[RMDB]
RNA sequence: GGGAACGACUCGAGUAGAGUCGAAAAAGCGAGGUAGACCGAUCAGGAGAAAGCGAUGAAUCGCAUCGUGCAGUUCGGAGUUUCCGCCGUGGCCGCGGCGGCGAUCGGCAUCGGAGCCGGGUCGGGGACCACCCUUGCCGUUCGCGGCAAGGGUGGUAAAAGAAACAACAACAACAAC
Reactivity to 2A3 in 0.01 (KOAc 150mM, MgCl2 10mM, bicine 150mM(pH8.5), 24C), signal-to-noise 1, nucleotides 027 to 126: a000g020c080g000a050g140g000u160a030g050a120c020c000g040a040u020c040a050g170g000a080g070a010a080a050g110c040g000a010u000g160a120a080u240c090g020c050a080u060c040g070u050g010c000a080g040u060u030c020g070g040a140g010u000u110u030c060c000g000c030c000g010u040g160g010c060c070g000c000g000g000c000g000g000c030g060a020u020c000g000g000c000a040u080c060g060g040a030g000c000c000g000g060g000u000c000g000g060g030g000